RNA sequence: GGGAACGACUCGAGUAGAGUCGAAAAGGAACGUUGUUCGCAACGUUCCGUGCCCGAAACGGACAUGACGAUCGCGCGCAUGUCGGGAAACCGUAAACGCGAGCAUCAUGGUGUUCGCACCAUGAAAACGGAUUUGCACAUUCGUGUGCAAAUCCGUAAAAGAAACAACAACAACAAC
Reactivity to 2A3 in 0.01 (KOAc 150mM, MgCl2 10mM, bicine 150mM(pH8.5), 24C), signal-to-noise 1, nucleotides 027 to 126: g010g000a020a000c010g020u010u010g040u050u090c170g050c090a000a000c030g000u020u000c000c000g000u030g060c020c000c000g000a080a130a040c040g080g020a000c020a010u020g050a160c010g090a110u050c020g000c000g000c000g000c020a000u000g010u000c000g010g070g020a060a050a010c080c040g050u190a110a070a040c000g000c000g020a000g040c020a060u040c010a000u040g000g030u000g040u030u050c220g000c000a000c000c000a000u010g000a060a000a000
Reactivity to DMS in 0.01 (KOAc 150mM, MgCl2 10mM, bicine 150mM(pH8.5), 24C), signal-to-noise 1, nucleotides 027 to 126: g010g000a000a040c000g010u000u020g020u000u000c140g010c010a000a000c000g010u000u000c000c000g000u010g000c000c000c010g030a030a140a040c040g010g000a030c020a010u000g000a100c000g010a050u000c010g010c000g000c020g000c010a010u000g010u000c040g010g000g000a080a070a160c300c030g010u000a030a140a090c010g000c010g010a040g000c300a210u000c000a000u010g010g020u000g000u000u010c080g000c010a030c010c000a020u000g010a060a040a090